The record gives the reactivity of an RNA of 207 nucleotides to 2A3 and DMS. The DMS profile rests on 4,877 reads. The 2A3 profile rests on 7,217 reads. The reactions ran in a buffer of 150 mM KOAc, 10 mM MgCl2 and 150 mM bicine (pH 8.5), at 24 C.

RNA sequence: GGGAACGACUCGAGUAGAGUCGAAAAGGCUAGGUGGUAUUCCGGUGUGGGAUACUUGGUAAUAUGUAACGCUAAUUGCAUAAGAUUGUAGGACGGAAUCUACAGUCUUGGUUUUUAUAAACCUGAAAAAAGGAAUUACACUUCGGUGUAAUUCCAAGUGCUAAUAGUAGUUCGCUACUAUUAGCACAAAAGAAACAACAACAACAAC
Reactivity to 2A3 in 0.01 (KOAc 150mM, MgCl2 10mM, bicine 150mM(pH8.5), 24C), signal-to-noise 6, nucleotides 027 to 156: g040g010c050u060a010g010g110u040g030g010u080a090u070u030c040c030g110g080u150g030u120g040g030g010a020u050a070c020u040u090g010g010u080a070a070u060a090u150g060u070a050a020c040g010c130u050a080a060u100u070g020c010a050u030a130a010g000a010u020u010g000u020a010g010g090a040c160g050g060a050a050u030c000u010a010c000a010g000u000c000u000u020g010g000u030u020u000u040u030a170u120a070a050a030c000c010u030g090a080a040a020a000a020a040g000g000a000a000u000u000a000c000a000c010u030u070c230g080g000u000g000u000a000a000u000u000c000c000a000a010
Reactivity to DMS in 0.01 (KOAc 150mM, MgCl2 10mM, bicine 150mM(pH8.5), 24C), signal-to-noise 2, nucleotides 027 to 156: g020g040c050u000a050g050g040u000g000g050u000a080u000u000c000c030g010g040u000g050u010g000g020g020a050u000a000c040u000u000g030g030u010a100a130u000a070u000g000u000a060a100c070g020c050u010a110a120u010u000g000c020a120u000a030a040g000a040u000u000g000u000a020g000g020a150c050g030g010a150a300u000c000u000a010c010a010g020u010c000u000u000g000g010u010u020u000u000u010a130u000a070a040a050c010c010u000g000a010a030a110a070a090a150g010g020a030a030u000u000a000c020a030c000u000u020c300g040g000u000g010u000a010a010u000u010c000c010a010a020